[RMDB]
RNA sequence: GGGAACGACUCGAGUAGAGUCGAAAAACAGUUGGAACACUGGCAACCUUUAUUAAAUGCUGACGAGGUAAUAGUCGGUUUUUGGAUCACAGUAGUUGUUCGCUGGCUUAUGCGUAUACCUCAAGGCCUGGCCACUAUAGUUCGCUAUAGUGGCCAGAAAAGAAACAACAACAACAAC
Reactivity to 2A3 in 0.01 (KOAc 150mM, MgCl2 10mM, bicine 150mM(pH8.5), 24C), signal-to-noise 1, nucleotides 027 to 126: a000c000a000g000u000u010g070g000a060a000c000a000c070u070g000g140c120a140a200c000c000u020u210u000a160u040u300a100a180a130u070g000c000u000g000a000c160g000a000g000g020u170a120a140u000a040g000u000c000g070g000u000u040u000u050u100g020g080a010u030c000a060c080a110g070u170a000g000u020u180g000u020u000c000g000c000u000g000g000c030u180u000a200u300g110c030g000u040a000u140a210c000c000u000c000a000a000g000g000c080
Reactivity to DMS in 0.01 (KOAc 150mM, MgCl2 10mM, bicine 150mM(pH8.5), 24C), signal-to-noise 2, nucleotides 027 to 126: a090c020a040g000u000u000g050g000a110a100c150a000c000u000g020g120c070a150a180c000c010u010u030u000a040u010u020a000a110a080u040g020c010u000g000a230c280g000a030g000g000u000a030a060u060a040g000u000c000g010g000u000u040u030u000u000g000g040a100u000c130a010c140a100g000u020a060g000u000u010g010u000u000c210g010c000u000g020g000c000u000u080a020u030g010c160g020u040a020u040a000c000c030u000c000a030a300g000g040c030